[RMDB]
RNA sequence: GGGAACGACUCGAGUAGAGUCGAAAACAUCCAGGAACCCCAUCCGAAACGUACGGCAUGCGAAAGGAUGGCGGAUGGGAAAGCAUGCAAGGUUAGGCGUGAGGAUUGUGCAUGCGAAAGGAUGGCGAUGAAGUGCGUAUGUUGCAAUAUCCUUGCAACUCUCCAAUUAGUUCGCUAAUUGGAGAGUAAAAGAAACAACAACAACAAC
Reactivity to 2A3 in 0.01 (KOAc 150mM, MgCl2 10mM, bicine 150mM(pH8.5), 24C), signal-to-noise 3, nucleotides 027 to 156: c020a020u020c020c010a010g080g070a060a080c020c020c000c000a000u010c020c010g030a150a130a030c050g040u140a020c060g050g050c120a070u120g030c040g110a200a050a040g060g030a030u080g090g000c040g000g010a010u010g010g000g040a050a070a000g020c020a000u040g020c020a040a040g090g020u090u090a060g050g030c070g020u060g020a050g040g060a060u060u080g030u010g000c020a010u010g010c030g030a030a000a010g060g000a030u040g000g020c030g020a040u110g060a090a010g050u040g030c030g000u060a080u190g040u040u050g000c000a040a020u040a040u140c020c000u000u010g020c010a030
Reactivity to DMS in 0.01 (KOAc 150mM, MgCl2 10mM, bicine 150mM(pH8.5), 24C), signal-to-noise 4, nucleotides 027 to 156: c040a090u010c030c020a170g010g030a110a180c060c010c010c010a040u000c010c010g010a070a090a110c060g010u000a070c050g030g000c030a300u040g000c030g010a120a140a240g010g010a050u000g000g020c020g040g010a080u000g000g020g020a090a090a150g010c030a060u010g020c030a070a060g000g000u010u000a080g020g010c040g040u000g000a080g010g010a080u000u000g000u010g010c000a030u000g020c030g020a050a090a120g000g000a070u000g060g010c040g010a070u000g010a070a070g020u000g010c020g010u010a100u010g010u010u000g010c000a050a110u000a120u000c030c000u000u000g020c040a190